Structure probing data (DMS) for a 177-nucleotide construct. The reactions ran in a buffer of 150 mM KOAc, 10 mM MgCl2 and 150 mM bicine (pH 8.5), at 24 C. It was measured as part of the RMDB library TTRINS.
[RMDB]
RNA sequence: GGGAACGACUCGAGUAGAGUCGAAAAGAUAUGGACCUGUAAUCAUACGAAGCCGUCCAGAACUACGCACCAGUGUCGGAAACGACACGGUGCGCUGGACGGCUUCGUAUGUGCAGGUCCUAAGUCACUUUAAUAGUAUGUUCGCAUACUAUUAAAGAAAAGAAACAACAACAACAAC
Reactivity to DMS in 0.01 (KOAc 150mM, MgCl2 10mM, bicine 150mM(pH8.5), 24C), signal-to-noise 2, nucleotides 027 to 126: g000a060u010a300u000g000g000a010c000c000u000g010u000a100a120u010c000a010u000a000c000g020a030a010g000c000c010g020u000c000c000a010g000a100a060c150u030a300c030g010c000a000c000c000a120g100u000g000u000c000g010g010a140a110a260c010g000a010c000a010c010g000g020u000g010c010g000c000u000g010g000a030c000g000g020c000u000u000c000g000u000a000u000g020u000g000c010a000g000g010u000c000c000u000a010a050g010u010c040a200